Source: RMDB library OK2TST, as collected in RNAgym. An RNA of 177 nucleotides, treated with 2A3 and DMS and read out base by base.
RNA sequence: GGGAACGACUCGAGUAGAGUCGAAAACAGUGGUGCGAUCUCUGCUCACUGCAACCUCUGCCUCCCGGGUUCAGAAGAUUCUCUUGCCUCAGCCUCCAGAGUAGCUGAGACUACAGGUGCACGCCACUAAUGUUUCUCCAUUCGUGGAGAAACAUUAAAAAGAAACAACAACAACAAC
Reactivity to 2A3 in 0.01 (KOAc 150mM, MgCl2 10mM, bicine 150mM(pH8.5), 24C), signal-to-noise 1, nucleotides 027 to 126: c010a000g000u010g040g070u140g050c040g070a180u030c080u030c010u140g010c000u040c030a070c000u000g000c020a030a110c000c020u050c060u120g090c010c000u000c000c030c000g030g010g010u060u030c040a040g000a110a010g020a160u110u010c030u000c000u100u090g030c020c040u030c000a000g010c000c000u090c010c030a060g000a020g130u030a010g020c000u000g040a020g000a030c000u050a010c030a030g080g010u040g030c030a000c050g020c030c010a050c010
Reactivity to DMS in 0.01 (KOAc 150mM, MgCl2 10mM, bicine 150mM(pH8.5), 24C), signal-to-noise 3, nucleotides 027 to 126: c070a050g010u000g010g010u010g010c040g000a110u000c100u020c080u000g010c030u000c040a090c040u000g020c070a060a050c030c000u000c050u000g010c050c030u000c010c010c020g010g000g010u000u010c060a050g000a120a140g010a080u000u000c020u000c030u000u000g000c030c000u000c030a020g000c020c020u010c050c060a080g000a100g010u000a050g010c010u000g010a060g000a070c030u010a050c070a030g000g010u000g000c060a090c050g010c030c020a050c100
The 2A3 profile rests on 1,465 reads.